[RMDB]
Structure probing data (DMS) for a 177-nucleotide construct.
For DMS, 570 sequencing reads were counted.
The data come from the RNA Mapping Database (RMDB), library OK2TRN.
RNA sequence: GGGAACGACUCGAGUAGAGUCGAAAAAGUAUUGCUACUACUAAUAAUAAAGGAGAAUAUUAUUUUAUUAGUAUGUUGCCUUAUAAAUCUCCUCGUUAUUUGAGAAAUGCAAACAUAAGAAUAGAGAUGACCUGUUAGGGUUCGCCCUAAUAGGUCAAAAAGAAACAACAACAACAAC
Reactivity to DMS in 0.01 (KOAc 150mM, MgCl2 10mM, bicine 150mM(pH8.5), 24C), signal-to-noise 1, nucleotides 027 to 126: a180g010u000a030u000u000g000c000u000a060c010u000a090c000u010a050a030u000a010a030u010a100a080a150g010g020a300g000a300a100u020a190u000u060a130u000u000u000u010a110u010u000a050g000u000a020u000g000u000u000g000c010c060u000u000a030u010a010a020a090u000c120u000c000c010u000c150g010u000u000a050u000u000u000g010a060g000a030a120a080u000g030c110a040a050a010c140a070u000a050a070g000a060a160u020a080g000a190g010a220